RNA sequence: GGGAACGACUCGAGUAGAGUCGAAAAGACGCCUGAUGGCGAACGUGCGCAAGAUAAGAAUGGUGGUAUAUACUGCCAAGAAUAACUAAUGGACGGCAGAGCGCACGAACCACCACUGUCCACCAGAAUCGAGCUAUACUUUCGAGUAUAGCUCGAUAAAAGAAACAACAACAACAAC
Reactivity to 2A3 in 0.01 (KOAc 150mM, MgCl2 10mM, bicine 150mM(pH8.5), 24C), signal-to-noise 4, nucleotides 027 to 126: g070a020c050g010c050c020u190g160a190u300g000g000c000g020a070a000c010g000u010g000c010g000c000a050a050g060a300u110a110a050g080a130a060u070g000g000u000g010g000u020a130u000a000u040a180c020u010g000c000c000a010a010g040a040a110u140a030a000c090u130a070a120u190g090g080a020c070g040g000c000a000g010a000g040c000g020c000a000c000g010a030a000c010c020a020c000c020a030c090u090g040u020c000c000a000c010c000a030g050a010
Reactivity to DMS in 0.01 (KOAc 150mM, MgCl2 10mM, bicine 150mM(pH8.5), 24C), signal-to-noise 3, nucleotides 027 to 126: g050a060c020g020c010c000u020g000a170u040g010g050c020g000a140a110c020g030u000g010c010g010c000a140a100g030a160u050a030a080g000a210a120u000g020g000u000g010g020u000a060u030a110u040a110c000u030g030c000c000a040a130g030a210a070u020a060a140c150u070a100a170u010g010g010a180c120g000g000c030a000g000a180g000c020g000c000a020c010g020a030a040c110c050a110c140c080a100c050u000g010u040c000c030a040c080c060a060g000a210